[RMDB]
RNA sequence: GGGAACGACUCGAGUAGAGUCGAAAAGCACUAGAGGGCGUAACGGCUGGGUGUAACCCAACUCUAGGUGUGCUGAUUAGCGGGCUUGACUCCGUAACAUAUAGGCACUGGUGGUAAAAAGCAUCCCUGACCAUAUACAUCUUCGGAUGUAUAUGAAGUACAACGAUCUGUUCGCAGAUCGUUGUACAAAAGAAACAACAACAACAAC
Reactivity to DMS in 0.01 (KOAc 150mM, MgCl2 10mM, bicine 150mM(pH8.5), 24C), signal-to-noise 1, nucleotides 027 to 156: g040c080a090c040u000a060g010a030g020g050g000c060g000u000a130a180c210g000g040c030u000g000g000g020u000g000u010a050a300c000c000c000a040a010c010u000c010u000a050g060g000u000g020u000g010c070u000g000a170u000u000a170g000c040g030g010g030c100u000u010g010a100c090u010c020c000g020u010a160a070c160a080u000a120u000a080g050g010c040a070c080u010g020g040u010g000g000u010a050a100a130a140a070g000c040a070u000c010c010c010u000g010a200c180c000a030u010a000u000a030c000a010u000c000u000u020c300g070g000a000u000g010u000a000u000a010u000g010a030a060
Reactivity to 2A3 in 0.01 (KOAc 150mM, MgCl2 10mM, bicine 150mM(pH8.5), 24C), signal-to-noise 2, nucleotides 027 to 156: g060c030a010c020u010a010g000a020g030g030g000c020g030u080a100a030c080g130g000c040u020g000g050g000u010g030u040a120a090c000c000c020a020a020c000u010c010u000a000g180g000u060g000u000g020c000u040g030a170u080u040a040g020c020g030g000g000c030u050u080g050a100c020u000c080c010g000u020a040a000c020a000u140a000u110a110g000g010c010a000c020u040g000g000u070g020g050u150a120a080a000a000a000g010c020a030u010c020c000c000u020g040a030c000c010a000u000a000u000a000c000a000u000c010u000u010c190g140g000a010u000g000u000a000u000a000u000g000a010a020
This 207-nucleotide RNA was probed chemically with DMS and 2A3. Source: RMDB library M2RFPK, as collected in RNAgym. DMS adducts were read by reverse transcription with MarathonRT. The RNA was probed in 150 mM KOAc, 10 mM MgCl2 and 150 mM bicine (pH 8.5) at 24 C. For DMS, 1,598 sequencing reads were counted.